[RMDB]
RNA sequence: GGGAACGACUCGAGUAGAGUCGAAAAGACUGAUUCGUCAGUCCAGUAAUCCUAAGUCACUAGACUCUUGUCAGUACGAUAAGGGUCGGAAACGACCCUUUUGACGUACUUGGAUUUAGAGUCAGUGAUAUGGACCAUACGCUUGUUCGCAAGCGAAUUGAUCGUAGGAGUUCGCUCCUACGAUCAAAAAAGAAACAACAACAACAAC
Reactivity to DMS in 0.01 (KOAc 150mM, MgCl2 10mM, bicine 150mM(pH8.5), 24C), signal-to-noise 2, nucleotides 027 to 156: g000a010c000u010g000a110u000u030c300g030u000c010a040g030u000c000c020a250g010u000a040a100u000c000c000u000a140a300g040u010c000a040c010u010a220g020a040c000u000c000u000u000g000u000c000a090g060u000a030c070g010a140u020a010a010g010g040g010u000c010g000g000a070a100a300c030g020a000c000c020c000u000u010u010u000g010a300c130g020u000a030c000u000u000g070g000a070u010u000u000a020g000a020g010u000c000a050g010u000g000a010u000a200u000g000g010a090c110c020a130u000a080c040g020c030u000u000g000u000u010c200g020c060a020a010g000c030g010a060a130
Reactivity to 2A3 in 0.01 (KOAc 150mM, MgCl2 10mM, bicine 150mM(pH8.5), 24C), signal-to-noise 3, nucleotides 027 to 156: g000a000c010u010g000a030u040u150c210g030u060c100a000g020u010c030c020a040g160u110a010a100u020c000c010u020a110a020g020u000c000a000c010u030a140g000a000c000u000c000u030u000g000u000c000a010g010u000a000c010g000a010u010a070a000g000g000g010u010c030g010g020a060a040a020c020g000a000c010c030c040u030u010u030u060g170a060c000g000u010a000c000u020u040g150g010a030u300u180u090a000g000a000g000u000c010a000g000u000g000a000u010a000u050g020g000a010c030c000a040u100a240c010g030c010u000u030g030u100u090c280g050c160a000a000g040c020g030a030a130
This 207-nucleotide RNA was probed chemically with DMS and 2A3. Values cover nucleotides 27 to 156. The RNA was probed in 150 mM KOAc, 10 mM MgCl2 and 150 mM bicine (pH 8.5) at 24 C. 2A3 adducts were read by reverse transcription with SuperScript II with manganese. DMS (dimethyl sulfate) methylates the pairing face of unpaired adenines and cytosines. The data come from the RNA Mapping Database (RMDB), library RNAMAK.